Chemical mapping of a 177-nucleotide RNA with DMS and 2A3. Values cover nucleotides 27 to 126. Conditions: 150 mM KOAc, 10 mM MgCl2 and 150 mM bicine (pH 8.5), 24 C.
RNA sequence: GGGAACGACUCGAGUAGAGUCGAAAAUGACGAUGAUCCAGGUCGGCGCGAACAUGAUCGAGCUGCGCUGCGGCGUGAUGGGCGGCGAGUCGCGGCGCAUCGGCGAACUCGCGAAGCGCCUCGCGCACACUCAGCGAGGUUUCGACCUCGCUGAGUGAAAAGAAACAACAACAACAAC
Reactivity to DMS in 0.01 (KOAc 150mM, MgCl2 10mM, bicine 150mM(pH8.5), 24C), signal-to-noise 1, nucleotides 027 to 126: u020g000a130c080g000a150u000g000a050u020c060c050a020g000g000u000c050g000g000c020g050c020g010a060a070c170a090u020g000a080u000c050g010a140g020c120u000g010c040g000c030u010g010c060g010g020c000g000u020g020a080u000g010g000g000c030g010g000c050g000a100g020u000c000g010c030g000g000c040g020c010a010u000c070g010g010c040g000a060a070c070u010c020g000c020g030a110a080g020c070g010c030c000u000c040g020c040g000c120a260
Reactivity to 2A3 in 0.01 (KOAc 150mM, MgCl2 10mM, bicine 150mM(pH8.5), 24C), signal-to-noise 1, nucleotides 027 to 126: u150g010a010c050g050a050u110g020a010u030c010c030a030g070g090u090c000g000g060c020g050c010g030a060a040c090a140u210g030a120u100c040g030a040g010c050u030g000c080g010c010u030g000c030g030g060c030g010u100g010a110u120g030g030g000c020g040g000c010g010a020g000u010c000g000c000g080g000c000g010c010a020u000c010g030g040c020g000a030a030c030u000c040g010c010g050a060a020g030c040g060c040c010u000c010g000c010g020c010a040

Record summary: The 2A3 profile rests on 1,747 reads.